[RMDB]
RNA sequence: GGGAACGACUCGAGUAGAGUCGAAAACAAAAUGAUUGUUCCUGGUAUAUAGAUAAAGAGUCCUAUAUAUUUGAAAAUCGUUACGGCUCGAUUAAACUUUAAUGAUUGCAUAGUGAAUAUAUCAUUAGGAUUUAACUCCUUGACUAUCAGGGCGGCACAGAAUGGCAGAAUUCGUUCUGCCAUUCUGAAAAGAAACAACAACAACAAC
Reactivity to 2A3 in 0.01 (KOAc 150mM, MgCl2 10mM, bicine 150mM(pH8.5), 24C), signal-to-noise 1, nucleotides 027 to 156: c030a020a150a010a020u100g000a180u060u060g020u090u150c000c000u000g000g000u000a000u000a000u030a030g010a050u100a170a200a030g040a020g000u020c000c030u000a030u020a000u000a030u050u090u090g130a200a040a000a040u030c010g010u010u020a000c020g010g020c030u000c060g000a000u000u200a060a030a030c020u060u060u150a030a000u040g020a000u050u060g000c080a080u090a170g030u110g080a050a000u080a000u010a000u090c080a110u040u100a020g000g000a000u000u030u140a020a040c000u030c000c000u000u020g020a020c080u000a010u070c000a000g000g020g080c040g050g000c070a000
Reactivity to DMS in 0.01 (KOAc 150mM, MgCl2 10mM, bicine 150mM(pH8.5), 24C), signal-to-noise 1, nucleotides 027 to 156: c020a040a120a020a170u000g040a120u000u000g060u010u000c000c060u000g000g020u000a080u000a110u010a030g000a240u010a050a160a260g020a190g030u000c000c010u000a030u000a000u000a040u000u020u030g000a120a100a030a040u000c040g020u000u000a020c050g000g120c030u000c050g020a300u000u000a150a030a020c020u000u000u000a010a030u000g000a040u010u000g030c070a100u010a300g050u000g020a050a070u010a050u000a020u010c040a110u010u000a010g000g020a080u000u000u000a040a060c140u010c030c030u000u000g020a230c200u000a080u010c040a030g020g050g030c000g000g010c040a130